[RMDB]
RNA sequence: GGGAACGACUCGAGUAGAGUCGAAAAGUGAUUUAUUGAAUAUUGUUACUGAAAGUGAGAAACAGCAUGGUUGCAUGAAAGGAGGCACAGUCGAGCCAGGCACAGCCUGGGCGCAGAGCGAGACUCACCAUGUGCAUCUUUUCGAAGAUGCACAUGGAAAAGAAACAACAACAACAAC
Reactivity to 2A3 in 0.01 (KOAc 150mM, MgCl2 10mM, bicine 150mM(pH8.5), 24C), signal-to-noise 4, nucleotides 027 to 126: g040u040g040a100u070u140u140a130u140u230g100a070a060u110a070u130u060g030u010u020a050c050u040g080a090a070a120g040u040g040a060g060a020a120a040c050a010g050c010a050u090g090g010u060u090g050c040a080u130g060a020a020a020g060g040a020g020g030c030a000c030a030g060u080c040g030a010g080c000c000a010g000g000c020a010c010a300g000c000c010u010g010g030g000c000g010c020a030g000a000g030c020g040a020g030a040c010u030c030a020
Reactivity to DMS in 0.01 (KOAc 150mM, MgCl2 10mM, bicine 150mM(pH8.5), 24C), signal-to-noise 4, nucleotides 027 to 126: g010u010g010a030u000u030u020a050u020u020g020a070a090u020a090u000u000g010u000u000a040c020u010g000a080a050a110g030u000g000a070g000a080a050a110c090a070g030c060a060u030g010g040u000u000g010c100a020u000g000a040a070a080g000g000a080g010g010c040a040c070a070g010u020c030g000a070g030c000c000a020g010g040c010a110c160a160g010c030c010u000g000g000g000c030g020c080a100g020a070g000c010g010a080g010a180c030u020c080a130